RNA sequence: GGGAACGACUCGAGUAGAGUCGAAAAAGAGUGUGGGUGCAGGUAGUAUCUGCCUGCGGGGCUGGGGAGGCAGGCCAAAGGGGCUCCACAUGAGAGGUCCUGCAUGCCCCUGGGCACAACAAGGACUGAUUCAAUCUGCAUGCCAGCCUGGAGGAGACGUACGUAAAUACUUCGGUAUUUACGUACGAAAAGAAACAACAACAACAAC
Reactivity to DMS in 0.01 (KOAc 150mM, MgCl2 10mM, bicine 150mM(pH8.5), 24C), signal-to-noise 1, nucleotides 027 to 156: a040g010a170g000u010g050u010g000g000g000u000g030c010a010g000g020u020a130g010u000a140u000c020u010g000c010c000u020g010c000g040g020g010g070c000u010g000g010g030g000a130g030g000c010a030g010g050c030c040a040a110a060g030g020g030g010c090u000c040c070a070c160a130u040g010a080g000a160g000g000u020c000c020u000g000c080a140u010g040c020c010c030c060u000g030g040g000c060a100c020a040a120c020a090a020g000g040a170c010u010g010a110u010u000c110a110a090u000c100u000g000c040a130u000g060c000c030a060g060c050c020u000g010g040a120g010g000a210g020a120
Reactivity to 2A3 in 0.01 (KOAc 150mM, MgCl2 10mM, bicine 150mM(pH8.5), 24C), signal-to-noise 2, nucleotides 027 to 156: a000g090a020g010u090g010u050g050g020g010u080g030c000a000g010g000u080a020g010u040a170u040c050u070g010c020c010u040g000c070g010g030g000g000c040u060g010g000g060g010a060g090g000c010a030g040g000c010c050a070a080a020g040g000g000g010c020u060c050c060a160c080a130u220g050a090g010a020g090g040u040c000c000u010g010c010a030u060g010c030c000c020c010u040g000g030g000c020a030c010a120a100c020a050a060g000g040a090c050u060g030a130u070u030c020a030a040u040c020u010g010c030a020u140g100c000c000a000g000c000c000u000g010g000a060g000g020a040g000a000

The record gives the reactivity of an RNA of 207 nucleotides to DMS and 2A3. For 2A3, 1,651 sequencing reads were counted. For DMS the reverse transcriptase was MarathonRT.